[RMDB]
Conditions: 150 mM KOAc, 10 mM MgCl2 and 150 mM bicine (pH 8.5), 24 C. This 177-nucleotide RNA was probed chemically with DMS and 2A3. The DMS profile rests on 1,763 reads.
RNA sequence: GGGAACGACUCGAGUAGAGUCGAAAAGUCAGAAAGUAUCCUUCACCAUCGAAAGCGGCGCUAAAGGCCCGGCAGCUGGCAACGUAACUUCUCUGUAAGUUCAAGCCGCUAAGAAUCGAGAAUCCCUUCUUAUUUACUUGUUCGCAAGUAAAUAAGAAAAAGAAACAACAACAACAAC
Reactivity to DMS in 0.01 (KOAc 150mM, MgCl2 10mM, bicine 150mM(pH8.5), 24C), signal-to-noise 3, nucleotides 027 to 126: g020u010c040a050g020a100a060a070g030u010a080u000c030c020u000u010c060a100c050c060a070u000c050g000a040a170a090g030c020g010g000c040g020c120u000a050a100a180g000g010c040c010c050g000g000c120a120g010c020u000g000g020c020a050a080c200g000u010a030a040c010u000u000c030u020c190u000g000u010a020a030g000u010u000c050a090a190g000c000c000g030c030u010a060a160g000a080a060u020c020g010a060g000a220a160u000c010c010c020u000
Reactivity to 2A3 in 0.01 (KOAc 150mM, MgCl2 10mM, bicine 150mM(pH8.5), 24C), signal-to-noise 2, nucleotides 027 to 126: g050u060c030a050g140a050a120a000g070u080a130u090c020c020u020u060c030a070c060c010a100u020c020g040a080a090a000g000c000g010g000c000g000c080u110a170a100a100g070g000c020c020c000g080g000c050a020g050c060u080g000g000c020a050a020c030g030u050a000a020c000u040u000c180u010c090u130g140u230a020a000g000u020u000c020a030a020g000c010c000g000c000u000a010a020g030a040a070u040c010g000a000g030a110a070u030c000c000c000u020
Reactivities are rounded to 0.1 and cut off at 0 and 3.